[RMDB]
RNA sequence: GGGAACGACUCGAGUAGAGUCGAAAACAAUUCUAAACCAAAAGACUCAUAGCAUUUCCUCAGGGCCAUCUGCUCGAAGAAGAAUCUCUCGGGGAGCCUUACUAGGCCAGAUAAUGCAGUAGGUCCACAUACCGUUUCGAUUCGUCGAAACGGUAUGAAAAGAAACAACAACAACAAC
Reactivity to DMS in 0.01 (KOAc 150mM, MgCl2 10mM, bicine 150mM(pH8.5), 24C), signal-to-noise 3, nucleotides 027 to 126: c130a050a070u000u000c070u000a080a070a150c100c070a150a110a120a120g010a060c020u000c050a070u000a050g010c020a050u000u020u000c070c070u010c190a110g020g020g000c050c060a100u000c030u000g010c020u010c000g000a050a050g000a070a120g000a150a100u010c060u010c080u010c040g020g000g020g000a070g020c240c050u010u000a090c300u010a070g020g000c010c040a080g010a070u000a040a070u000g000c020a030g000u000a200g020g010u000c010c060a200
Reactivity to 2A3 in 0.01 (KOAc 150mM, MgCl2 10mM, bicine 150mM(pH8.5), 24C), signal-to-noise 2, nucleotides 027 to 126: c000a010a020u150u060c040u210a100a130a110c040c030a010a120a080a100g020a040c020u050c100a080u090a090g020c010a040u050u050u070c010c030u010c070a050g060g000g000c010c020a070u020c020u040g030c000u020c040g080a110a090g010a030a020g050a080a190u060c020u000c010u030c080g000g000g000g100a050g000c000c010u080u030a080c080u120a030g020g000c000c020a020g000a070u200a030a070u110g000c020a010g000u070a040g000g020u020c040c000a020